RNA sequence: GGGAACGACUCGAGUAGAGUCGAAAAUUGCCUUGACUGGGGGCAAGAUCCUCUUUAGACUCUUGUACCCCUAAAUUUGGCGGGAAUUCGUUCCUGCCAUUUUGCUUUUCUUGCAAGACAAUAGCGUAGGAUUAAUCAAGUUCGCUUGAUUAAUCCUAAAAGAAACAACAACAACAAC
Reactivity to DMS in 0.01 (KOAc 150mM, MgCl2 10mM, bicine 150mM(pH8.5), 24C), signal-to-noise 3, nucleotides 027 to 126: u010u010g010c040c010u010u000g010a100c200u000g000g000g030g000g000c000a000a000g000a030u010c070c120u000c190u000u030u030a090g000a050c120u000c000u000u000g000u000a130c000c000c000c010u000a010a020a020u000u000u000g000g000c000g010g010g030a010a010u010u030c160g010u000u000c000c000u000g010c000c000a000u000u000u000u000g020c110u030u030u020u030c070u010u010g020c030a040a000g000a110c070a010a030u010a100g030c180g020u030
Reactivity to 2A3 in 0.01 (KOAc 150mM, MgCl2 10mM, bicine 150mM(pH8.5), 24C), signal-to-noise 9, nucleotides 027 to 126: u050u050g070c010c010u060u070g070a110c130u060g000g000g010g010g000c000a000a000g000a010u040c020c040u130c070u110u110u190a070g020a040c060u010c000u010u020g030u300a300c000c000c000c000u010a020a030a010u030u020u040g010g000c010g000g000g020a010a010u060u060c150g070u070u000c000c000u000g000c000c000a000u010u010u010u030g020c020u070u110u090u080c040u060u130g020c020a030a030g060a100c030a070a140u050a130g080c040g080u030
An RNA of 177 nucleotides, treated with DMS and 2A3 and read out base by base.
It was measured as part of the RMDB libraries RFM100 and RFMREP.
The RNA was probed in 150 mM KOAc, 10 mM MgCl2 and 150 mM bicine (pH 8.5) at 24 C.
For DMS the reverse transcriptase was MarathonRT.